Overview:
An RNA of 207 nucleotides, treated with 2A3 and DMS and read out base by base. 2A3 adducts were read by reverse transcription with SuperScript II with manganese. Conditions: 150 mM KOAc, 10 mM MgCl2 and 150 mM bicine (pH 8.5), 24 C. DMS adducts were read by reverse transcription with MarathonRT. It was measured as part of the RMDB library M2RFPK. The 2A3 profile rests on 4,019 reads.

RNA sequence: GGGAACGACUCGAGUAGAGUCGAAAAAGGUGAUUUCUCCUGCACCUUUAUCAAUGGAGGAACUCGACUUUGCUGUGGGUCCCAAAGGGACCUUAGGUGCAGACAGUUACCGGCGGUGAAGUGUUAGCAUAGGUUCGUGUCUUCGGACACGAACCAAGCUUAUAUAGUGGUUCGCCACUAUAUAAGCAAAAGAAACAACAACAACAAC
Reactivity to 2A3 in 0.01 (KOAc 150mM, MgCl2 10mM, bicine 150mM(pH8.5), 24C), signal-to-noise 4, nucleotides 027 to 156: a000g020g000u020g000a050u040u050u000c010u010c010c010u130g030c020a010c000c000u090u220u070a070u040c040a040a020u210g020g000a010g010g030a040a040c040u050c090g070a030c040u030u020u050g010c020u020g020u110g030g000g010u010c020c010c010a160a150a090g000g000g000a000c000c000u000u070a030g000g000u010g000c000a020g070a240c010a020g030u030u060a020c000c010g030g000c010g000g010u030g020a020a010g010u020g040u150u130a040g020c070a110u070a190g010g000u000u010c000g000u010g000u010c010u010u040c130g080g000a000c000a000c000g000a000a000c000c000a000a000
Reactivity to DMS in 0.01 (KOAc 150mM, MgCl2 10mM, bicine 150mM(pH8.5), 24C), signal-to-noise 2, nucleotides 027 to 156: a070g000g020u020g020a300u010u000u000c010u000c030c030u000g010c030a080c020c030u000u010u000a060u000c080a090a210u000g020g000a130g030g010a030a110c080u000c050g000a090c040u000u000u000g020c050u010g020u000g030g040g030u040c020c010c010a030a110a160g020g010g020a000c010c000u000u000a020g040g020u000g000c040a110g010a100c110a080g020u010u000a060c000c040g010g030c130g000g030u010g000a040a070g020u000g010u000u000a090g030c140a100u000a130g030g040u000u000c000g040u000g000u000c000u020u020c300g020g010a040c000a010c000g010a000a020c000c000a000a040

The DMS profile rests on 3,232 reads.